[RMDB]
RNA sequence: GGGAACGACUCGAGUAGAGUCGAAAAUGCCGCCGCUGACCCGCAAGACGGAUGGCCUGCCUGUCGGUGCGGUUUCCGGUUUCUGCAACAUGCUGUGGAAGCUGUUGAAGGAUGCGCGCAACACGGACACUAGCUAGCACUUCGGUGCUAGCUAGUGAAAAGAAACAACAACAACAAC
Reactivity to 2A3 in 0.01 (KOAc 150mM, MgCl2 10mM, bicine 150mM(pH8.5), 24C), signal-to-noise 1, nucleotides 027 to 126: u070g000c050c030g010c000c040g080c050u060g020a090c000c030c020g000c100a060a030g070a030c030g030g070a100u090g080g030c010c060u030g040c010c000u080g030u090c050g020g090u010g010c050g040g000u010u020u060c010c030g000g000u000u000u000c020u020g010c010a080a070c030a210u240g060c000u000g080u120g050g080a040a010g010c000u000g050u190u110g000a090a040g040g020a050u080g060c070g000c000g000c000a010a030c060a020c020g070g020a010
Reactivity to DMS in 0.01 (KOAc 150mM, MgCl2 10mM, bicine 150mM(pH8.5), 24C), signal-to-noise 2, nucleotides 027 to 126: u010g000c010c040g000c050c090g030c080u000g010a110c150c070c020g020c050a090a150g010a100c050g010g000a110u000g030g000c050c040u010g010c060c020u000g010u010c040g010g010u000g000c050g000g000u020u010u000c020c030g000g020u000u000u000c010u000g010c020a020a110c110a060u030g010c050u010g020u010g000g020a170a070g000c010u000g030u010u010g010a040a020g010g020a060u000g000c080g020c030g010c030a050a110c060a070c070g010g000a300
Notes:
An RNA of 177 nucleotides, treated with 2A3 and DMS and read out base by base. In probing experiments dimethyl sulfate is read out at A N1 and C N3, which are open when not base-paired. Conditions: 150 mM KOAc, 10 mM MgCl2 and 150 mM bicine (pH 8.5), 24 C. DMS adducts were read by reverse transcription with MarathonRT. For 2A3 the reverse transcriptase was SuperScript II with manganese. Reactivities are given for positions 27 through 126.